[RMDB]
RNA sequence: GGGAACGACUCGAGUAGAGUCGAAAAUCAUGAGUCCAUCGAGAGAAGCUGCGGAACAACUCUGGCGGCGUUACAAUACCGAUGAGGGCCUUUGGCGCCAUGCCCUGGCAGUAGAGGCCGCCAUGCGGCAUCCAAAGGUAUUCGUACCUUUGGAUGCAAAAGAAACAACAACAACAAC
Reactivity to 2A3 in 0.01 (KOAc 150mM, MgCl2 10mM, bicine 150mM(pH8.5), 24C), signal-to-noise 9, nucleotides 027 to 126: u110c040a040u100g050a020g080u020c020c010a040u060c050g050a050g000a010g030a220a030g020c030u040g010c020g040g040a070a090c070a060a070c090u030c040u090g140g000c000g000g000c010g010u030u030a060c060a090a100u060a170c010c030g050a050u120g070a170g060g010g000c010c020u080u040u070g120g010c030g000c020c020a050u170g020c010c020c020u030g040g000c020a020g010u040a020g020a030g030g010c010c010g020c020c010a030u110g040c050g060
Reactivity to DMS in 0.01 (KOAc 150mM, MgCl2 10mM, bicine 150mM(pH8.5), 24C), signal-to-noise 9, nucleotides 027 to 126: u030c050a060u010g000a110g010u020c050c020a040u010c040g000a080g010a090g000a110a090g000c040u010g010c040g000g000a060a130c160a090a130c130u010c030u010g000g020c000g000g000c020g010u020u010a060c110a090a070u040a120c080c030g000a040u010g010a130g010g010g000c020c050u000u010u010g000g010c060g000c020c030a050u030g000c110c100c070u010g000g010c030a080g010u010a050g000a040g010g010c010c010g010c030c030a010u010g010c180g000
Structure probing data (2A3 and DMS) for a 177-nucleotide construct.
The reactions ran in a buffer of 150 mM KOAc, 10 mM MgCl2 and 150 mM bicine (pH 8.5), at 24 C.
The DMS profile rests on 63,820 reads.
DMS adducts were read by reverse transcription with MarathonRT.
It was measured as part of the RMDB library OK1LIB.